Structure probing data (DMS and 2A3) for a 177-nucleotide construct. DMS adducts were read by reverse transcription with MarathonRT.
[RMDB]
RNA sequence: GGGAACGACUCGAGUAGAGUCGAAAAAGUUAUGAGUUCGCUCAUAACUACAGCGAAAGGCGCUCCGACCCGCAGUCCGCCGAAGGCAUCCCAGCCUGUCCAAGUUGGUAUAUUUCGAUAUACCAAAUUAGCUAUUUGAAUUCGUUCAAAUAGCUAAAAAAGAAACAACAACAACAAC
Reactivity to DMS in 0.01 (KOAc 150mM, MgCl2 10mM, bicine 150mM(pH8.5), 24C), signal-to-noise 9, nucleotides 027 to 126: a040g000u000u000a000u000g000a010g010u000u010c240g020c000u000c000a010u000a010a010c000u000a080c130a100g010c050g000a060a090a090g010g010c040g010c040u000c040c040g010a120c060c040c030g000c070a100g000u000c060c030g020c030c040g010a130a040g000g000c030a080u000c010c010c010a160g010c020c010u000g010u010c070c140a100a100g000u000u000g000g000u000a000u000a010u000u010u010c130g010a020u000a000u000a010c000c000a000a020a080
Reactivity to 2A3 in 0.01 (KOAc 150mM, MgCl2 10mM, bicine 150mM(pH8.5), 24C), signal-to-noise 3, nucleotides 027 to 126: a000g000u010u000a010u010g000a000g030u030u130c180g050c060u010c000a010u000a010a000c000u020a030c030a020g060c020g080a160a050a050g080g010c030g000c040u050c030c040g120a120c000c010c010g000c020a020g020u030c020c030g020c020c040g070a040a010g030g000c010a030u040c000c000c000a010g010c010c000u040g020u040c050c030a110a060g090u030u020g010g010u000a000u000a000u010u090u070c170g010a010u010a000u000a000c010c000a000a020a010